Structure probing data (DMS and 2A3) for a 177-nucleotide construct.
For DMS the reverse transcriptase was MarathonRT.
RNA sequence: GGGAACGACUCGAGUAGAGUCGAAAAGCGCCACAAACUGCAUUCCACUAUCGCCAAAGUCAGCGACGACUACGGCCGCCGCCAGCAGUUCAACACCGCCAUCGCCGCCGUGAUGGAAUUGCUCAACCGUAUCCGACCUGUUCGCAGGUCGGAUACGAAAAGAAACAACAACAACAAC
Reactivity to DMS in 0.01 (KOAc 150mM, MgCl2 10mM, bicine 150mM(pH8.5), 24C), signal-to-noise 2, nucleotides 027 to 126: g000c020g020c030c020a100c060a030a280a190c280u020g000c010a100u000u000c000c020a050c180u000a000u010c040g000c030c100a090a150a050g010u000c160a000g000c140g030a040c000g060a270c000u000a090c300g000g000c100c030g040c040c010g000c030c080a000g040c000a100g000u080u000c070a060a190c040a000c000c140g000c100c000a150u000c000g000c000c170g090c040c190g040u000g000a040u100g000g000a090a030u030u040g000c000u000c080a030a010c150
Reactivity to 2A3 in 0.01 (KOAc 150mM, MgCl2 10mM, bicine 150mM(pH8.5), 24C), signal-to-noise 2, nucleotides 027 to 126: g010c010g000c010c020a070c040a030a170a000c080u100g000c000a050u140u000c010c020a040c060u060a020u180c050g050c040c020a160a040a010g100u060c050a010g060c030g070a050c030g010a040c030u080a120c100g060g000c000c000g000c000c010g020c010c050a000g020c010a010g020u080u070c030a090a000c000a000c030c000g030c000c040a070u080c060g010c060c030g000c030c010g030u000g010a050u060g000g070a020a050u080u020g020c000u000c040a010a140c070
For 2A3 the reverse transcriptase was SuperScript II with manganese. The data come from the RNA Mapping Database (RMDB), library OK1LIB.